[RMDB]
This 177-nucleotide RNA was probed chemically with DMS.
RNA sequence: GGGAACGACUCGAGUAGAGUCGAAAAGAUAUGGAUUCCUCUACCCACCGACCCUUUCUUGGUUCGGAAACGAACCUUGAAAGCGAGGAGGAAUCCUAAGUCAAACGGCCGGCUUCGGCCGGCCGAAUCUAAGCAUAGUGUUCGCACUAUGCUUAGAAAAAGAAACAACAACAACAAC
Reactivity to DMS in 0.01 (KOAc 150mM, MgCl2 10mM, bicine 150mM(pH8.5), 24C), signal-to-noise 1, nucleotides 027 to 126: g000a070u000a060u040g000g000a020u010u000c000c000u010c000u000a280c060c080c090a130c190c130g000a160c220c000c000u000u000u000c000u010u000g020g030u000u040c000g030g000a050a000a070c000g010a020a000c000c000u000u000g000a000a000a000g010c130g020a270g010g000a000g000g020a010a010u000c000c000u000a010a080g000u000c000a040a200a260c140g040g030c000c060g030g030c150u020u040c230g040g080c000c070g060g050c050c040g010a010a020
For DMS the reverse transcriptase was MarathonRT.